Chemical mapping of a 177-nucleotide RNA with DMS and 2A3. The DMS profile rests on 738 reads.
RNA sequence: GGGAACGACUCGAGUAGAGUCGAAAAGCUAAUGGUGCGGGUAAAUCGACCUUGAUGGCGAUCCUUUCUGGUGCUCACAAUCACUAUCGCGGUAAGAUCUUCAUUGAUGGUCAGCAGGUAGAUAUUCACGGCGUACAAUGUUCGCAUUGUACGCCGUAAAAGAAACAACAACAACAAC
Reactivity to DMS in 0.01 (KOAc 150mM, MgCl2 10mM, bicine 150mM(pH8.5), 24C), signal-to-noise 1, nucleotides 027 to 126: g000c040u000a090a110u020g010g040u010g000c050g000g010g000u000a100a100a040u010c110g030a060c010c020u000u000g040a130u000g000g010c050g000a040u020c020c020u000u000u010c050u000g000g000u000g000c110u010c130a080c200a070a030u000c080a110c050u000a080u000c040g030c130g000g000u000a080a100g000a040u000c070u000u000c040a060u020u010g000a110u000g050g010u000c030a100g000c050a060g000g000u000a050g050a120u010a120u000u010c170
Reactivity to 2A3 in 0.01 (KOAc 150mM, MgCl2 10mM, bicine 150mM(pH8.5), 24C), signal-to-noise 1, nucleotides 027 to 126: g030c000u050a010a040u210g140g000u170g030c030g020g000g080u100a060a090a090u150c090g050a180c010c030u030u060g080a000u050g040g030c030g000a000u030c020c020u020u040u030c030u180g000g000u030g030c010u020c020a050c030a070a130u120c030a010c150u040a030u150c060g000c030g000g130u010a130a060g050a150u000c000u040u000c050a070u000u160g060a080u030g040g000u000c020a000g010c060a020g010g010u030a040g010a170u060a050u120u120c160

Source information:
Source: RMDB library OK2TST, as collected in RNAgym. Conditions: 150 mM KOAc, 10 mM MgCl2 and 150 mM bicine (pH 8.5), 24 C. The 2A3 profile rests on 595 reads. DMS adducts were read by reverse transcription with MarathonRT.